[RMDB]
RNA sequence: GGGAACGACUCGAGUAGAGUCGAAAACACAUCGGGACCGCGCAUGACCGUGCCGUCAUCGUUGACGAGUUCGCAGAUAACGCCGAUGGGCGGCAGGUUGGCGAGCUUGCACAGAUCAACGGCGGCAUCGGCCACUACUGUUCGCAGUAGUGGCCGAAAAAGAAACAACAACAACAAC
Reactivity to 2A3 in 0.01 (KOAc 150mM, MgCl2 10mM, bicine 150mM(pH8.5), 24C), signal-to-noise 1, nucleotides 027 to 126: c100a020c000a120u120c070g030g010g050a040c060c000g040c020g040c100a040u080g050a160c020c030g030u040g000c000c030g040u020c000a100u080c040g010u030u120g040a080c020g000a000g040u020u000c000g000c000a010g020a150u110a060a050c010g000c010c030g180a290u210g270g060g010c020g020g020c010a040g080g090u050u040g000g000c000g000a010g010c000u060u050g000c170a130c050a120g110a120u030c030a010a030c000g000g010c000g000g000c010a020
Reactivity to DMS in 0.01 (KOAc 150mM, MgCl2 10mM, bicine 150mM(pH8.5), 24C), signal-to-noise 1, nucleotides 027 to 126: c130a110c150a100u000c090g000g010g000a140c070c000g030c070g010c090a060u010g000a040c010c030g000u000g000c000c000g000u020c080a090u000c080g020u000u000g000a300c000g000a050g020u000u010c010g000c000a080g000a090u000a050a040c030g000c000c000g000a250u030g000g040g040c010g010g000c080a030g010g010u010u020g000g030c000g000a000g010c030u010u000g010c050a060c130a160g010a090u010c110a030a080c060g020g000c010g000g000c030a150